[RMDB]
The record gives the reactivity of an RNA of 207 nucleotides to 2A3. The 2A3 profile rests on 1,233 reads. Source: RMDB library VIROID, as collected in RNAgym. For 2A3 the reverse transcriptase was SuperScript II with manganese. The RNA was probed in 150 mM KOAc, 10 mM MgCl2 and 150 mM bicine (pH 8.5) at 24 C.

RNA sequence: GGGAACGACUCGAGUAGAGUCGAAAAUCAGACAGGAGUAAUCCCCGCAGAAACAGGGUUUUCACCCUACCUUUCUUCGGGUUUCCUUCCUCUGCUUGCGGCCUCGCCCGGAGUCUUCGAAUCCAGCGCAGGUUCUGACGCGACCGGUGGCACGCCGACUAUGACCAACGUUCGCGUUGGUCAUAGUAAAAGAAACAACAACAACAAC
Reactivity to 2A3 in 0.01 (KOAc 150mM, MgCl2 10mM, bicine 150mM(pH8.5), 24C), signal-to-noise 2, nucleotides 027 to 156: u090c010a000g060a130c080a110g000g000a020g020u020a020a070u060c000c000c010c020g020c000a000g010a020a010a090c270a090g000g050g010u070u080u270u300c130a030c000c010c010u060a120c020c000u040u010u020c000u000u020c000g000g050g030u020u030u000c000c000u010u050c020c000u030c010u020g030c080u070u100g070c010g030g000c010c020u030c050g050c000c020c020g020g000a020g010u000c020u060u040c110g030a110a090u040c020c050a080g120c050g050c120a050g000g000u040u030c050u040g030a040c040g030c020g090a080c000c070g030g020u040g040g020c070a030c140g020c000c000g020